[RMDB]
RNA sequence: GGGAACGACUCGAGUAGAGUCGAAAACGCCCUCCGACGCCGCUCGCCGCUCCUCAUGGAUGCCGCAGGCUCGUCACGGACGCACGCGUAACCCCCUCCUCGUUACGCCAAGCUGUUCGGACCACCACCAAUAUGAAACGUUCGCGUUUCAUAUUGGAAAAGAAACAACAACAACAAC
Reactivity to 2A3 in 0.01 (KOAc 150mM, MgCl2 10mM, bicine 150mM(pH8.5), 24C), signal-to-noise 1, nucleotides 027 to 126: c070g050c010c010c000u030c040c050g030a020c040g030c050c010g090c020u030c080g010c010c010g010c020u000c010c000u080c000a090u210g010g000a060u170g030c010c020g000c050a000g030g040c050u000c040g020u010c010a130c090g000g020a010c000g000c020a010c040g030c010g000u040a050a050c060c020c040c000c040u050c020c030u050c010g030u010u010a000c000g000c000c010a040a110g000c030u080g020u050u000c000g020g070a020c020c000a050c010c010a120
Reactivity to DMS in 0.01 (KOAc 150mM, MgCl2 10mM, bicine 150mM(pH8.5), 24C), signal-to-noise 3, nucleotides 027 to 126: c140g040c010c000c000u000c060c060g000a090c050g040c070c060g000c050u000c050g020c060c090g000c030u000c030c010u000c100a100u010g020g000a090u020g020c010c140g020c030a110g010g000c050u010c060g000u000c050a120c020g010g000a010c050g000c010a110c150g030c030g000u020a040a050c030c070c010c020c020u010c040c030u010c090g010u010u000a010c030g020c020c060a070a120g000c030u010g010u000u000c020g040g010a110c050c100a050c140c070a190